This 207-nucleotide RNA was probed chemically with DMS and 2A3.
RNA sequence: GGGAACGACUCGAGUAGAGUCGAAAACAAGCCAUGUUUGCAGUGUUAAAAUUUAUUUGGUGCAAUAAAUAGUAUGCCAGGCUUAUAAUCUAGAGAUUGAGUCUUGAAAAAAGACAGGAUAAACCAAGUUGAAAGACAAAAGGAAGCAGGGCAUGGACAAGAGGUGGAUAUUCGUAUCCACCUCUUGAAAAGAAACAACAACAACAAC
Reactivity to DMS in 0.01 (KOAc 150mM, MgCl2 10mM, bicine 150mM(pH8.5), 24C), signal-to-noise 2, nucleotides 027 to 156: c030a130a160g030c030c060a120u000g010u000u000u010g030c010a100g040u000g040u000u000a030a090a130a030u000u010u000a030u020u000u010g040g050u040g010c040a120a070u000a050a070a140u010a120g020u010a100u000g000c100c040a090g010g000c030u000u000a010u000a060a130u000c020u000a070g000a200g000a090u010u000g010a130g000u000c010u000u000g000a000a010a120a160a020a020g020a070c000a080g030g000a070u000a040a090a120c060c040a070a190g030u000u000g020a090a120a070g000a040c010a010a070a120a130g020g000a060a080g010c020a050g010g040g000c010a040u000g000g020a180
Reactivity to 2A3 in 0.01 (KOAc 150mM, MgCl2 10mM, bicine 150mM(pH8.5), 24C), signal-to-noise 2, nucleotides 027 to 156: c070a040a010g040c000c000a030u050g070u070u040u030g130c030a040g080u020g060u180u090a110a130a130a140u080u070u100a100u010u100u090g010g010u050g050c010a030a020u040a110a090a030u060a070g140u050a050u040g030c000c010a010g010g030c000u130u020a140u050a160a030u040c040u080a040g070a050g030a150u000u140g030a030g040u000c010u040u060g080a120a060a000a030a050a000g040a030c010a010g040g070a070u140a040a050a010c050c000a070a020g040u050u020g130a130a040a000g040a010c020a010a190a010a000g050g040a030a020g000c020a020g020g000g000c010a010u040g020g000a020